[RMDB]
RNA sequence: GGGAACGACUCGAGUAGAGUCGAAAAGCUGCAGAGCCAGUUACAGAAGCACAACAAACUGAACCAACACCAGUUGUUGAAACUAUUGCAGAGAUUACACCUCAGGUAGUUACAGAGCCUGUAGUAGAUUCUACUAAAAGUUCGCUUUUAGUAGAAUAAAAGAAACAACAACAACAAC
Reactivity to DMS in 0.01 (KOAc 150mM, MgCl2 10mM, bicine 150mM(pH8.5), 24C), signal-to-noise 5, nucleotides 027 to 126: g010c030u000g010c020a040g010a140g020c030c040a130g010u000u000a140c100a070g000a110a110g010c100a140c070a040a050c050a030a070a090c010u000g000a060a100c090c130a060a080c090a100c090c050a080g000u000u010g000u000u010g000a120a070a090c030u000a030u000u000g000c060a080g000a070g010a060u000u020a100c150a190c090c010u010c050a080g000g010u000a030g000u000u000a070c060a140g000a140g000c030c030u000g010u010a030g010u000a100g000
Reactivity to 2A3 in 0.01 (KOAc 150mM, MgCl2 10mM, bicine 150mM(pH8.5), 24C), signal-to-noise 2, nucleotides 027 to 126: g000c010u010g010c030a010g010a040g160c030c020a020g040u080u050a080c030a080g120a110a020g030c030a010c010a080a010c010a040a130a040c010u010g010a090a030c060c020a090a030c040a020c090c030a020g000u010u010g020u030u020g010a120a050a000c030u010a050u070u110g000c070a040g020a000g000a040u110u100a020c040a050c060c000u020c020a030g020g030u030a010g060u070u080a050c020a050g120a040g090c000c000u000g020u020a010g000u010a010g030

Conditions: 150 mM KOAc, 10 mM MgCl2 and 150 mM bicine (pH 8.5), 24 C. An RNA of 177 nucleotides, treated with DMS and 2A3 and read out base by base. For 2A3, 1,992 sequencing reads were counted. The data come from the RNA Mapping Database (RMDB), library OK2TST.